[RMDB]
RNA sequence: GGGAACGACUCGAGUAGAGUCGAAAAAAAGAUAUGGACGUGUGAACUACUAAUCGAUGCGUCGAAGAACUACAAUCGGAAACGAUUGUAGGGAGACGGGCAGAUUAGCACACGUCCUAAGUCAAAAGUGUUUACAGAAGUUCGCUUCUGUAAACACAAAAGAAACAACAACAACAAC
Reactivity to 2A3 in 0.01 (KOAc 150mM, MgCl2 10mM, bicine 150mM(pH8.5), 24C), signal-to-noise 1, nucleotides 027 to 126: a000a010a010g050a030u090a050u110g020g000a000c010g000u010g030u000g010a060a050c050u180a020c020u010a300a010u020c020g130a100u140g300c000g010u000c010g140a210a040g010a030a030c010u020a020c000a020a010u020c000g000g040a060a000a010c030g000a010u000u030g000u000a000g000g000g000a060g010a000c020g000g230g020c080a080g010a020u010u010a000g000c030a010c000a010c010g000u020c000c000u000a000a000g020u010c000a000a000a000a130
Reactivity to DMS in 0.01 (KOAc 150mM, MgCl2 10mM, bicine 150mM(pH8.5), 24C), signal-to-noise 2, nucleotides 027 to 126: a060a050a120g020a010u000a300u010g040g000a000c000g050u000g010u010g010a060a030c100u010a300c010u000a020a010u000c000g010a130u000g000c000g020u000c000g040a070a150g020a140a290c000u000a000c010a000a000u000c000g000g010a070a040a120c010g010a050u000u000g000u000a000g000g000g000a040g010a050c000g000g000g010c140a170g000a030u000u000a000g000c000a010c000a010c010g020u000c000c000u060a010a020g000u000c020a080a120a120a180